[RMDB]
RNA sequence: GGGAACGACUCGAGUAGAGUCGAAAAUUCGAUUAUAAGUCGCCAGGUUUAUAUGAUUCGUUCUUGAGACACCACUUUCUUAUGACUGUGUUUCUAACUUACUUUGUGUGAGGACAUCGGUAGAUGGUAUUAAAAAUUCAUUCGUGAAUUUUUAAUAAAAAGAAACAACAACAACAAC
Reactivity to 2A3 in 0.01 (KOAc 150mM, MgCl2 10mM, bicine 150mM(pH8.5), 24C), signal-to-noise 5, nucleotides 027 to 126: u060u050c010g010a020u060u060a040u120a110a040g040u010c000g030c080c020a060g060g000u030u100u030a110u030a040u140g080a060u070u090c030g020u020u030c010u030u060g050a030g020a020c010a030c080c010a050c010u020u090u070c040u050u150a110u120g040a060c060u030g010u010g020u040u030u010c030u020a060a100c020u030u040a020c020u080u140u230g150u080g010u010g080a010g010g000a020c010a030u020c040g020g020u050a060g010a030u030g010g020
Reactivity to DMS in 0.01 (KOAc 150mM, MgCl2 10mM, bicine 150mM(pH8.5), 24C), signal-to-noise 5, nucleotides 027 to 126: u030u020c060g000a090u030u010a040u010a060a090g010u000c020g000c070c110a100g010g010u010u000u010a020u010a050u020g000a090u010u010c040g000u010u010c030u000u000g010a090g000a050c060a050c040c060a050c080u010u010u000c040u010u010a080u020g010a050c090u000g010u000g000u000u000u000c020u000a070a090c030u010u000a010c010u010u020u030g020u030g020u000g000a020g000g000a090c020a000u000c020g000g010u030a060g010a030u010g000g040
Source: RMDB libraries RFM100 and RFMREP, as collected in RNAgym. Chemical mapping of a 177-nucleotide RNA with 2A3 and DMS. For DMS the reverse transcriptase was MarathonRT.